[RMDB]
RNA sequence: GGGAACGACUCGAGUAGAGUCGAAAAUUCGGUAUGAGGCCGAUACUGCCAGAGCCGAGCGCAAUCUGGAGCGCCUCCAGAACCAGAUCAGGCGCGUGAACAGCGCAUCGACGAGUGGCCUUCAGGAGAAACUGGUAUAAUUCGUUAUACCAGUUUCAAAAGAAACAACAACAACAAC
Reactivity to 2A3 in 0.01 (KOAc 150mM, MgCl2 10mM, bicine 150mM(pH8.5), 24C), signal-to-noise 6, nucleotides 027 to 126: u040u010c020g010g010u100a130u240g150a130g180g000c010c010g020a030u050a080c060u100g010c010c010a030g010a020g070c010c010g020a020g000c020g000c010a030a120u030c020u070g080g040a100g020c030g000c010c000u040c030c000a070g020a130a110c050c020a040g010a130u060c020a020g040g000c010g000c020g030u060g050a040a050c100a060g010c010g000c060a200u030c010g050a050c020g020a050g150u050g000g010c000c000u050u060c040a050g000g040a070
Reactivity to DMS in 0.01 (KOAc 150mM, MgCl2 10mM, bicine 150mM(pH8.5), 24C), signal-to-noise 9, nucleotides 027 to 126: u000u000c020g000g010u000a120u010g010a170g020g020c010c060g010a080u000a080c130u010g000c010c020a080g000a300g010c010c010g010a040g010c050g020c030a110a120u000c030u000g000g020a280g010c030g000c020c030u010c070c080a090g000a120a170c130c160a070g000a070u010c140a060g010g010c020g010c020g010u000g010a070a070c200a170g000c020g010c010a070u000c030g010a060c040g010a160g020u000g010g010c020c170u000u000c040a050g000g010a300
Chemical mapping of a 177-nucleotide RNA with 2A3 and DMS.
The RNA was probed in 150 mM KOAc, 10 mM MgCl2 and 150 mM bicine (pH 8.5) at 24 C.